Chemical mapping of a 177-nucleotide RNA with DMS and 2A3. The reactions ran in a buffer of 150 mM KOAc, 10 mM MgCl2 and 150 mM bicine (pH 8.5), at 24 C.

[RMDB]
RNA sequence: GGGAACGACUCGAGUAGAGUCGAAAAUUUCUAUCGAUAAAGAAAUACCUGUUUCUGCUGGCUUAGCUGGAGGUUCGGCUGAUGCAGCAGCAACGUUAAGAGGAUUGAAUCGACUUUUUGAUAUAGGAUCGAGAUGACUAUUCGUAGUCAUCUCGAUAAAAGAAACAACAACAACAAC
Reactivity to DMS in 0.01 (KOAc 150mM, MgCl2 10mM, bicine 150mM(pH8.5), 24C), signal-to-noise 3, nucleotides 027 to 126: u000u000u010c000u000a090u000c050g020a060u000a010a170a070g000a040a010a040u020a130c000c020u000g000u000u000u000c000u000g000c000u000g000g020c020u000u000a020g020c000u010g010g010a200g060g040u050u050c020g000g040c010u000g020a000u020g010c010a040g010c000a020g000c010a020a000c040g020u020u010a110a090g000a090g000g030a150u020u020g000a120a120u000c050g010a140c100u000u010u000u030u020g000a060u000a110u000a130g010g010
Reactivity to 2A3 in 0.01 (KOAc 150mM, MgCl2 10mM, bicine 150mM(pH8.5), 24C), signal-to-noise 3, nucleotides 027 to 126: u040u020u000c020u030a130u020c020g040a070u080a090a280a010g110a030a110a000u040a140c000c000u010g000u000u000u030c000u000g000c010u020g050g210c010u030u010a000g020c000u020g060g090a230g180g110u190u270c060g000g000c000u040g020a090u130g000c000a000g000c000a000g000c000a010a000c040g030u140u080a080a070g110a060g160g010a100u070u170g080a040a070u010c030g030a100c070u100u010u070u050u230g140a090u140a030u050a200g130g030
Background:
For 2A3, 1,354 sequencing reads were counted. Source: RMDB library OK1LIB, as collected in RNAgym.